[RMDB]
RNA sequence: GGGAACGACUCGAGUAGAGUCGAAAACAGUUGACAUAAGGUAAAAUCUACAUUGUGCAGCUCUUAUUGUGUGUGAGGGUUGGCCUCAUUAACCAGCGCUAACAAGCCGUGCAAAUGCUCUGAUUGGUUCAAACCAUAUGUUCGCAUAUGGUUUGAAAAAAGAAACAACAACAACAAC
Reactivity to 2A3 in 0.01 (KOAc 150mM, MgCl2 10mM, bicine 150mM(pH8.5), 24C), signal-to-noise 7, nucleotides 027 to 126: c030a030g030u050u050g130a060c040a060u120a060a060g060g060u050a080a110a070a160u040c040u040a030c010a080u020u060g020u030g030c020a010g000c000u000c020u100u140a200u160u150g060u040g020u010g010u010g070a050g040g040g020u150u120g070g020c010c000u050c000a030u030u070a020a020c010c000a020g010c030g010c040u020a030a030c030a080a030g030c030c020g030u010g010c000a000a050a130u040g000c020u020c020u050g070a190u050u100g060g020
Reactivity to DMS in 0.01 (KOAc 150mM, MgCl2 10mM, bicine 150mM(pH8.5), 24C), signal-to-noise 7, nucleotides 027 to 126: c110a070g010u000u000g000a070c080a060u000a070a050g020g010u000a050a050a090a070u020c080u000a060c040a070u020u010g010u010g000c020a060g010c010u010c090u010u010a070u010u010g010u010g020u010g020u000g010a040g010g010g020u020u010g010g000c010c030u000c080a060u010u010a080a080c080c050a050g020c060g010c040u000a040a070c140a070a080g020c040c020g010u000g000c070a040a040a050u000g000c050u000c060u010g000a100u010u010g000g010